[RMDB]
RNA sequence: GGGAACGACUCGAGUAGAGUCGAAAACGGAGGUCCUCAGUUCUCUCUAUUCUUUCCCUUUUGAAAGAGGAGACUGCUGGACCAAACGCCCGAGCCGGGAUGCUGGGCCAUCUCCGAGCGAAGGGAGCGCGCUGGAAGGAUCAGCUCCCGAGAGGGGGUUGUUAUUUACCUUCGGGUAAAUAACAACAAAAGAAACAACAACAACAAC
Reactivity to 2A3 in 0.01 (KOAc 150mM, MgCl2 10mM, bicine 150mM(pH8.5), 24C), signal-to-noise 3, nucleotides 027 to 156: c040g010g080a070g010g000u010c010c010u000c010a140g010u300u060c020u010c020u000c020u110a300u220u110c060u060u070u100c100c070c080u090u200u120u210g010a010a010a000g010a020g040g020a000g010a010c060u010g080c050u040g010g000a000c020c000a020a020a010c000g010c010c030c010g020a090g130c020c000g010g000g000a020u150g000c000u000g000g050g000c020c000a110u090c110u010c070c010g130a020g000c010g010a060a140g100g040g000a060g110c050g000c000g000c040u060g000g020a000a040g010g000a020u000c000a000g000c000u010c030c010c020g000a030g030a010g000g010g000g010